Chemical mapping of a 177-nucleotide RNA with DMS and 2A3. It was measured as part of the RMDB library OK2TRN. The RNA was probed in 150 mM KOAc, 10 mM MgCl2 and 150 mM bicine (pH 8.5) at 24 C.
RNA sequence: GGGAACGACUCGAGUAGAGUCGAAAAAUGCUUUGAACUGAGCGUGGAGGAGGCAGGCAGCAUGUGGUCUUGAGGCUGAGAAUGUCAGCACCAGAGGCCACCACCAAGACCUGCGUGGUGGCGCCGGCAGCUCAUUAACCUUCGGGUUAAUGAGCUGAAAAGAAACAACAACAACAAC
Reactivity to DMS in 0.01 (KOAc 150mM, MgCl2 10mM, bicine 150mM(pH8.5), 24C), signal-to-noise 3, nucleotides 027 to 126: a090u010g000c030u000u020u010g000a100a100c070u010g010a060g020c050g020u000g010g000a090g000g000a120g010g000c060a050g010g030c030a060g040c120a070u000g000u000g000g010u000c010u000u010g010a180g010g000c010u000g020a040g000a120a120u010g010u000c020a040g010c020a080c030c040a170g010a060g010g000c000c000a010c000c080a030c050c050a090a090g010a110c200c060u000g000c090g020u000g000g010u000g010g000c050g030c020c060g000g000
Reactivity to 2A3 in 0.01 (KOAc 150mM, MgCl2 10mM, bicine 150mM(pH8.5), 24C), signal-to-noise 1, nucleotides 027 to 126: a000u050g000c040u010u110u210g030a160a050c090u040g020a010g080c030g000u040g000g090a080g030g060a040g050g000c000a000g000g000c030a020g000c000a040u140g020u020g060g010u000c010u020u110g020a060g030g000c010u000g020a000g070a240a300u200g070u100c020a000g000c010a030c010c010a020g060a040g130g000c000c010a000c000c010a020c010c000a020a010g080a140c000c020u050g020c010g030u030g000g000u030g000g000c080g000c010c030g040g020